[RMDB]
RNA sequence: GGGAACGACUCGAGUAGAGUCGAAAACUGCACGGCAAUGGAACAACCGCAUGUCGCACGGCUUAACACAUAUGGUUGAUCGAACCGGCGACUCACUCUGCGCUACCGGAGUGAGGGAUGGCUCACUCGAUUCAGUAUGUGCCUUCGAAUGACAGCCAAGGACAUAGCACUUCGGUGCUAUGUCCUUAAAAGAAACAACAACAACAAC
Reactivity to 2A3 in 0.01 (KOAc 150mM, MgCl2 10mM, bicine 150mM(pH8.5), 24C), signal-to-noise 1, nucleotides 027 to 156: c040u040g000c090a040c270g020g040c060a070a040u000g030g010a040a040c000a000a010c000c030g020c060a060u050g040u050c030g130c150a030c160g060g010c040u060u140a070a000c010a000c000a070u010a000u090g080g000u020u000g000a050u030c010g120a300a300c000c000g010g000c050g000a010c000u000c000a000c000u000c010u010g050c030g110c200u100a130c110c100g000g000a000g000u000g000a000g010g010g040a070u210g030g000c000u000c010a020c000u000c010g000a000u000u020c000a000g010u020a090u300g090u090g060c040c000u110u110c000g150a120a160u270g000a060c030a020g000c050c000